This 207-nucleotide RNA was probed chemically with 2A3 and DMS. It was measured as part of the RMDB library OK3TST. Conditions: 150 mM KOAc, 10 mM MgCl2 and 150 mM bicine (pH 8.5), 24 C. For 2A3, 826 sequencing reads were counted.
[RMDB]
RNA sequence: GGGAACGACUCGAGUAGAGUCGAAAACAGAAAUCUUGACCGGCGUAUUAUCAAGGGGCAAGAGCAAGGUUGGACGCCUGAGCAGAUACAGGCCAUUAACAAUGUGUCGCGUGGCACCCCCAUGCAGAAUACGGCCCGUAAUAUCGGCAAACUUGCGCCAAAGUUAUUCAUUCGUGAAUAACUUUGGAAAAGAAACAACAACAACAAC
Reactivity to 2A3 in 0.01 (KOAc 150mM, MgCl2 10mM, bicine 150mM(pH8.5), 24C), signal-to-noise 2, nucleotides 027 to 156: c000a000g090a030a130a020u040c050u110u080g040a100c050c000g050g060c050g000u100a080u280u090a100u290c090a060a080g030g000g040g040c020a000a020g000a040g070c000a050a000g010g030u060u040g070g030a020c110g000c020c000u100g060a070g010c090a020g050a070u040a050c010a020g000g000c030c020a080u210u220a110a070c120a150a150u170g020u000g000u060c030g020c020g070u050g000g000c080a030c000c030c000c000c030a040u040g000c030a010g040a120a000u150a080c060g020g000c030c000c000g000u000a060a020u060a010u140c030g000g000c000a030a110a000c010u030u040g000c040g020
Reactivity to DMS in 0.01 (KOAc 150mM, MgCl2 10mM, bicine 150mM(pH8.5), 24C), signal-to-noise 1, nucleotides 027 to 156: c050a240g000a130a110a090u010c030u000u000g020a000c020c030g010g050c300g000u000a030u000u030a090u000c090a070a300g000g000g000g000c020a030a030g030a110g030c030a050a080g010g020u020u030g010g040a170c040g010c070c020u020g010a080g000c080a140g000a080u000a040c020a040g000g030c010c020a110u000u000a060a040c070a160a150u020g010u000g020u010c030g010c110g000u000g000g010c040a180c030c060c080c030c000a150u000g020c000a060g000a080a150u000a050c020g050g030c010c080c000g030u020a040a080u010a010u000c030g010g010c000a050a030a080c080u000u000g020c070g030
About this RNA: The DMS profile rests on 1,293 reads.